[RMDB]
This 207-nucleotide RNA was probed chemically with 2A3 and DMS. For DMS the reverse transcriptase was MarathonRT. For 2A3 the reverse transcriptase was SuperScript II with manganese. Source: RMDB library OK3TST, as collected in RNAgym. Values cover nucleotides 27 to 156.
RNA sequence: GGGAACGACUCGAGUAGAGUCGAAAAAAAUGCAUGAGGCAGGAUUUGUUUGUUAUAAAGUACAGUUUGGUUUUAUAUAGGAGAGUCACAAAAUACUUCGUUGCCAGGGUGACUUUCAAGUAAAUGUCUAAAUGAACAAACAAGGGAAUAAUCAUGACAUAGCGGCUAAUUUCGAUUAGCCGCUAUGAAAAGAAACAACAACAACAAC
Reactivity to 2A3 in 0.01 (KOAc 150mM, MgCl2 10mM, bicine 150mM(pH8.5), 24C), signal-to-noise 1, nucleotides 027 to 156: a010a010a010u080g000c020a010u010g000a030g030g040c090a010g040g040a020u040u000u000g070u000u030u010g000u000u090a140u040a190a130a040g030u080a040c010a030g030u090u150u130g030g000u030u040u090u050a060u030a000u060a020g010g020a000g000a000g010u000c000a010c030a030a120a050a040u120a210c000u040u030c050g260u080u110g050c100c020a080g070g000g020u020g000a000c000u000u000u000c060a020a000g030u030a020a050a030u050g000u000c010u030a070a070a030u040g010a000a000c000a010a040a010c010a020a020g020g000g060a050a050u140a050a030u170c130a030u120g070a000
Reactivity to DMS in 0.01 (KOAc 150mM, MgCl2 10mM, bicine 150mM(pH8.5), 24C), signal-to-noise 1, nucleotides 027 to 156: a000a050a190u000g010c010a060u000g000a130g010g050c060a100g010g010a240u000u030u000g010u020u010u020g000u010u000a170u030a030a080a110g030u000a040c060a050g010u010u000u030g040g010u010u000u000u010a070u010a170u010a210g010g000a060g010a010g010u000c030a010c020a080a080a060a120u000a060c060u000u010c110g030u020u000g040c050c060a120g040g000g000u000g000a080c000u000u000u010c010a010a150g000u000a040a020a050u010g010u010c030u000a030a010a050u030g010a040a060c030a020a040a010c050a020a060g010g020g010a090a090u000a030a050u000c040a040u000g000a240